[RMDB]
RNA sequence: GGGAACGACUCGAGUAGAGUCGAAAAACUGUACGAGAAGAAGAAGGGCGAUGGGAAACCACCACCCGGUAUGGUCUCUGUGCUUCUGACUGAGCAGCUGGAGCGGGUGAAGGAGGUGCUGGCGACGCCUAAUUACUGCAUUCGUGCAGUAAUUAGGAAAAGAAACAACAACAACAAC
Reactivity to 2A3 in 0.01 (KOAc 150mM, MgCl2 10mM, bicine 150mM(pH8.5), 24C), signal-to-noise 9, nucleotides 027 to 126: a010c050u070g030u080a050c070g070a030g030a190a020g030a060a020g040a030a090g040g000g000c040g040a050u070g020g000g030a060a070a040c010c010a010c010c000a030c000c010c010g010g000u140a130u110g070g050u030c010u000c010u050g100u070g060c010u050u070c030u050g150a190c040u050g020a020g040c030a010g000c040u050g010g030a040g040c020g010g010g010u060g050a070a040g040g020a030g020g010u050g020c040u030g040g010c010g010a020c030g030
Reactivity to DMS in 0.01 (KOAc 150mM, MgCl2 10mM, bicine 150mM(pH8.5), 24C), signal-to-noise 9, nucleotides 027 to 126: a090c050u010g010u020a040c070g010a090g000a100a060g010a100a070g010a110a090g000g010g010c040g010a080u000g010g010g000a090a070a120c040c020a080c060c020a060c020c020c020g000g030u020a050u020g000g000u010c020u000c010u020g020u020g000c030u010u020c070u010g010a090c110u010g000a080g000c050a050g000c060u010g000g000a060g010c060g000g000g010u010g010a110a090g000g000a070g010g020u010g000c040u000g000g010c050g000a110c170g010